RNA sequence: GGGAACGACUCGAGUAGAGUCGAAAAGUUCCGAGCGAAGGGACGCGGGGGAGAGGGACAGACCCGAGAGGGGAUGAAACGGCAAAGAGCAUUGGAACAUCGGAGGAAUACCUCCCAAGAAGGAAAACUUAAUAUUCUGGUUCGCCAGAAUAUUAAGAAAAGAAACAACAACAACAAC
Reactivity to 2A3 in 0.01 (KOAc 150mM, MgCl2 10mM, bicine 150mM(pH8.5), 24C), signal-to-noise 2, nucleotides 027 to 126: g010u010u000c010c010g010a030g000c070g050a090a060g010g010g050a040c060g000c030g020g020g010g050g030a120g040a100g030g000g020a020c020a050g040a030c000c000c030g010a030g000a010g000g000g010g010a000u070g000a110a070a020c040g060g010c030a050a060a040g040a030g030c020a120u100u140g000g010a010a030c010a050u120c040g010g010a000g030g020a080a080u130a290c000c010u060c000c000c000a050a060g040a020a050g080g000a040a100a050a020
Reactivity to DMS in 0.01 (KOAc 150mM, MgCl2 10mM, bicine 150mM(pH8.5), 24C), signal-to-noise 3, nucleotides 027 to 126: g010u000u000c020c000g010a090g010c070g000a130a110g000g000g000a110c120g000c140g020g020g010g010g020a100g000a070g010g010g000a170c100a070g000a130c040c000c010g010a150g010a160g010g010g000g010a090u020g010a040a080a110c090g000g000c090a030a070a100g000a170g000c040a100u000u000g070g000a040a050c060a080u000c110g020g000a050g000g010a160a140u000a070c040c000u010c020c000c060a080a100g010a080a050g000g000a090a050a070a170